[RMDB]
Structure probing data (DMS and 2A3) for a 177-nucleotide construct. The reactions ran in a buffer of 150 mM KOAc, 10 mM MgCl2 and 150 mM bicine (pH 8.5), at 24 C. The data come from the RNA Mapping Database (RMDB), library RFMREP. For DMS, 1,405 sequencing reads were counted.
RNA sequence: GGGAACGACUCGAGUAGAGUCGAAAACUGUUCUUUUCAGUUUAAUCUCUGAAAGUGUUCUAAGGAACACAACAUUGAUUAAUCUCAUUUUUGGAUCUCGUGGCAAGGCCUCUGUGCUUGCGCAUGCGUUGUUAAGAACCUUCGGGUUCUUAACAACAAAAGAAACAACAACAACAAC
Reactivity to DMS in 0.01 (KOAc 150mM, MgCl2 10mM, bicine 150mM(pH8.5), 24C), signal-to-noise 2, nucleotides 027 to 126: c040u000g000u000u010c120u010u000u000u000c040a010g010u000u000u000a020a000u000c020u000c030u000g020a030a200a140g000u000g010u000u000c010u010a130a150g010g010a020a010c000a000c000a050a300c010a010u000u000g000a010u000u000a010a100u010c010u040c050a230u000u000u010u010u000g010g000a100u010c110u000c040g030u010g010g010c020a030a060g000g020c010c040u030c200u000g010u000g000c020u010u010g010c000g000c030a040u000g000c250
Reactivity to 2A3 in 0.01 (KOAc 150mM, MgCl2 10mM, bicine 150mM(pH8.5), 24C), signal-to-noise 3, nucleotides 027 to 126: c010u010g050u080u050c080u180u150u090u070c010a000g000u030u000u020a030a010u000c010u010c000u000g030a190a180a160g030u020g020u000u040c020u060a170a250g190g000a000a000c000a010c000a010a050c010a000u000u030g010a000u020u030a040a050u030c010u010c110a100u080u140u120u160u170g110g030a090u050c030u000c100g010u000g040g010c020a050a040g210g070c000c020u130c170u210g070u160g030c000u010u030g000c180g010c010a000u050g040c060